[RMDB]
RNA sequence: GGGAACGACUCGAGUAGAGUCGAAAACCAGAUGACGGUCCUGCCAUGAGACCGCAACGAGAGCAUGUCGCAUCGAAUGGACUAGGGGAGUCGGCAGCUUGCCCCACGGAUGAGCGCCUAAUGCCGGAAGAGACGUGCAACUUCGGUUGCACGUCAAACAUUACAUCUUCUUCGGAAGAUGUAAUGUAAAAGAAACAACAACAACAAC
Reactivity to DMS in 0.01 (KOAc 150mM, MgCl2 10mM, bicine 150mM(pH8.5), 24C), signal-to-noise 3, nucleotides 027 to 156: c020c000a180g000a130u000g000a100c000g000g020u000c020c000u010g020c060c210a130u000g020a100g010a010c030c060g010c020a080a150c040g010a130g020a150g010c060a070u010g010u000c040g000c020a090u010c040g000a110a300u000g010g010a100c020u010a080g030g020g020g010a120g010u000c020g020g030c010a110g000c050u000u010g010c030c000c010c050a170c110g000g010a080u000g020a130g010c030g030c030c010u010a060a070u000g020c000c030g020g020a030a100g000a210g010a010c000g010u000g000c000a020a000c000u000u000c300g040g010u010u000g020c000a010c000g040u000c000a010a050
Reactivity to 2A3 in 0.01 (KOAc 150mM, MgCl2 10mM, bicine 150mM(pH8.5), 24C), signal-to-noise 5, nucleotides 027 to 156: c010c000a010g040a140u140g060a030c020g000g000u010c020c020u070g120c040c030a120u150g020a050g010a100c000c030g010c030a030a040c070g080a010g000a020g090c030a040u100g030u110c030g010c060a050u050c050g070a050a050u090g000g020a030c050u090a100g000g010g000g010a030g030u030c010g010g000c010a040g020c030u060u130g020c010c010c010c030a050c020g050g000a100u090g020a040g050c040g040c010c030u060a110a040u110g020c000c020g030g000a020a030g080a010g000a030c000g000u000g000c000a000a000c000u040u070c220g100g000u000u000g000c000a010c000g000u000c000a000a000